[RMDB]
RNA sequence: GGGAACGACUCGAGUAGAGUCGAAAAAGUACGUACAGCGGCAUAAAGGCUACAAAGAAACCGAUAAUCCAGAACCAGAAGGCGCGUUUACCCCAGGUUUCGUUCAGCUUGAAGCCAAACGCCUUCGCAUAGUCCGGGCUUUCGAGCCCGGACUAUGAAAAGAAACAACAACAACAAC
Reactivity to 2A3 in 0.01 (KOAc 150mM, MgCl2 10mM, bicine 150mM(pH8.5), 24C), signal-to-noise 1, nucleotides 027 to 126: a030g120u070a020c040g000u000a020c040a020g000c030g000g010c140a140u140a210a050a090g040g000c000u020a100c100a040a280a000g080a050a000a000c000c000g130a140u210a060a000u170c060c070a020g050a030a050c000c040a000g000a000a040g010g000c030g030c020g030u080u080u120a140c010c000c010c010a060g000g020u000u020u000c000g000u080u180c210a120g000c120u000u130g060a080a000g000c010c000a000a000a050c000g000c060c000u020u000c010g000
Reactivity to DMS in 0.01 (KOAc 150mM, MgCl2 10mM, bicine 150mM(pH8.5), 24C), signal-to-noise 1, nucleotides 027 to 126: a140g030u000a000c040g000u000a160c130a070g060c230g000g000c050a000u200a090a190a070g050g010c000u020a130c140a040a010a080g000a020a020a040c000c060g030a110u020a040a010u000c120c060a060g030a180a030c100c110a000g040a010a050g030g000c000g000c040g000u000u000u000a070c010c000c010c040a200g000g000u000u010u000c000g000u020u010c270a070g000c030u000u000g030a120a070g000c010c000a030a050a120c120g000c020c000u030u000c000g010
Chemical mapping of a 177-nucleotide RNA with 2A3 and DMS. For DMS the reverse transcriptase was MarathonRT. Source: RMDB library OK1LIB, as collected in RNAgym.